[RMDB]
An RNA of 177 nucleotides, treated with 2A3 and DMS and read out base by base. It was measured as part of the RMDB library M2PK90. The DMS profile rests on 3,968 reads. 2A3 adducts were read by reverse transcription with SuperScript II with manganese. The RNA was probed in 150 mM KOAc, 10 mM MgCl2 and 150 mM bicine (pH 8.5) at 24 C. Reactivities are given for positions 27 through 126.
RNA sequence: GGGAACGACUCGAGUAGAGUCGAAAAAUACAGUACGAAAGUACAAAGAAGCAAUCAAACCGAGCAGUGAAAUGAUGGCUUCAGUCCAAAAUGGGCAAACACUGCAGACCGAGCCAAAGGCAAAUAACAUUUGAAAGAGAUUCGUCUCUUUCAAAUGAAAAGAAACAACAACAACAAC
Reactivity to 2A3 in 0.01 (KOAc 150mM, MgCl2 10mM, bicine 150mM(pH8.5), 24C), signal-to-noise 4, nucleotides 027 to 126: a010u140a030c030a010g020u010a010c000g040a100a050a020g020u010a010c010a000a080a010g010a010a010g000c020a020a040u060c020a090a040a110c060c070g050a040g020c020a010g030u030g060a040a100a150u120g010a010u030g010g000c000u050u040c030a010g010u000c020c000a040a130a020a260u160g010g010g000c000a020a040a010c010a000c010u020g000c010a010g040a040c010c040g020a020g050c010c020a090a070a030g030g000c030a070a040a080u160a070a020
Reactivity to DMS in 0.01 (KOAc 150mM, MgCl2 10mM, bicine 150mM(pH8.5), 24C), signal-to-noise 4, nucleotides 027 to 126: a070u020a100c150a120g020u000a000c000g000a110a090a170g020u000a010c010a090a060a120g000a020a020g010c030a060a020u000c040a040a080a120c080c070g010a100g010c030a040g000u000g010a100a080a080u000g010a050u010g000g030c000u010u000c020a080g010u000c030c030a040a040a060a060u010g010g010g000c070a050a080a090c020a020c030u000g020c020a080g000a100c080c040g010a070g000c060c030a030a040a090g010g010c090a050a060a080u010a070a140